An RNA of 177 nucleotides, treated with DMS and 2A3 and read out base by base.
High DMS reactivity at an A or C suggests that its Watson-Crick edge is free.
The reactions ran in a buffer of 150 mM KOAc, 10 mM MgCl2 and 150 mM bicine (pH 8.5), at 24 C.

RNA sequence: GGGAACGACUCGAGUAGAGUCGAAAAGUCCCGGAGUUCGCUCCGGGACAAAGAACCUCAAAUUGACGCAUACUUCCGCGUCAUCGCGAGGAAACGAGGAAAAAAUCACGGAGUUCGCUCCGUGAAAAUACAUAAUAAAGUUCGCUUUAUUAUGUAUAAAAGAAACAACAACAACAAC
Reactivity to DMS in 0.01 (KOAc 150mM, MgCl2 10mM, bicine 150mM(pH8.5), 24C), signal-to-noise 7, nucleotides 027 to 126: g010u000c000c000c010g020g000a020g040u000u010c210g020c010u000c000c000g000g010g020a000c000a010a030a090g000a120a150c010c000u010c010a030a290a070u000u000g000a010c000g020c000a120u010a150c250u010u010c180c180g000c000g010u010c010a000u000c130g010c300g010a010g000g010a050a050a070c150g000a110g010g010a010a020a080a090a140a120u000c000a010c000g000g000a010g030u000u010c190g010c000u010c000c000g010u000g000a000a010a060
Reactivity to 2A3 in 0.01 (KOAc 150mM, MgCl2 10mM, bicine 150mM(pH8.5), 24C), signal-to-noise 4, nucleotides 027 to 126: g000u000c020c000c000g000g000a020g010u090u140c140g000c110u000c000c010g010g000g000a010c010a000a010a000g000a020a060c000c000u000c000a050a070a040u030u010g000a010c000g010c010a020u080a300c140u270u090c110c080g000c000g010u000c010a010u000c010g020c020g020a020g000g020a050a060a030c090g040a130g130g000a170a120a010a030a010a060u030c000a000c010g010g000a010g020u060u050c100g040c050u000c000c000g000u000g000a000a000a010